Record summary: Structure probing data (2A3) for a 207-nucleotide construct. It was measured as part of the RMDB library M2RFPK. High 2A3 reactivity points to a flexible backbone, as in loops and unpaired stretches.

[RMDB]
RNA sequence: GGGAACGACUCGAGUAGAGUCGAAAAAGUCAGUGGUCCGACUUACGUGUCGGACCACUGACAUGGCAGCUGGAUCCAGCCAGGCGGUGUAUCGCCAAACCCAGCCAAUCAAUCUACCCACCGGGAAUACAGAAAGCGAACUUCGGUUCGCUUUCAACCAUCAUGUAAAGUUCGCUUUACAUGAUGGAAAAGAAACAACAACAACAAC
Reactivity to 2A3 in 0.01 (KOAc 150mM, MgCl2 10mM, bicine 150mM(pH8.5), 24C), signal-to-noise 2, nucleotides 027 to 156: a000g010u000c000a000g000u010g070g070u000c000c000g020a050c070u140u300a120c190g120u110g000u000c000g000g060a000c000c000a000c000u000g010a000c000a000u000g010g000c000a010g010c000u000g010g000a030u100c100c020a010g000c000c020a000g000g020c000g000g000u190g090u210a170u260c020g000c010c010a000a000a020c000c010c000a000g010c010c000a000a060u140c010a060a060u030c030u200a080c010c030c020a110c100c130g050g050g060a070a020u180a110c060a060g020a030a000a000g000c000g000a000a000c000u040u070c120g050g020u000u010c000g000c000u000u000u000c000a000a000